[RMDB]
RNA sequence: GGGAACGACUCGAGUAGAGUCGAAAACUAUGACUAUUGCCUUUCACCUUACACUACACUGAUAUGUUUUGCAUCAAGAGUAGGACAAUACACAGUAAUGAAAAAGAAUGAAAUUGUGUGCUUUGCAGCAACAUGGAUGCAGCUGGAGGCCAUUAUCACUUACCUCCCUAUUCGUAGGGAGGUAAGUAAAAGAAACAACAACAACAAC
Reactivity to DMS in 0.01 (KOAc 150mM, MgCl2 10mM, bicine 150mM(pH8.5), 24C), signal-to-noise 4, nucleotides 027 to 156: c070u000a070u000g010a140c050u000a050u010u000g030c010c030u000u000u000c030a070c030c020u020u000a060c070a080c020u000a030c030a070c070u000g030a130u000a110u000g020u010u010u000u010g040c020a090u000c070a050a090g000a160g010u000a190g010g000a050c010a030a020u000a050c020a040c020a080g030u010a050a120u020g010a060a070a090a080a100g000a130a100u010g000a090a050a110u010u000g020u000g010u000g020c030u000u000u000g020c090a070g020c030a070a060c050a140u010g010g020a080u010g050c020a070g000c060u000g010g010a100g010g030c030c010a050u010u000a080u010c050
Reactivity to 2A3 in 0.01 (KOAc 150mM, MgCl2 10mM, bicine 150mM(pH8.5), 24C), signal-to-noise 8, nucleotides 027 to 156: c040u070a070u210g050a030c020u040a040u070u110g010c000c000u040u090u080c030a060c040c020u060u150a030c040a020c050u100a020c040a020c040u060g040a070u050a070u180g100u040u060u080u090g050c030a040u030c060a150a040g030a030g070u060a020g030g050a010c030a030a040u070a050c050a000c030a060g060u120a100a080u110g140a120a050a050a020a030g120a050a060u110g050a080a040a100u140u070g020u000g020u020g040c050u060u060u110g070c040a020g000c010a010a060c010a060u080g080g010a030u040g020c020a020g010c020u020g000g020a010g020g000c000c010a030u060u080a060u120c000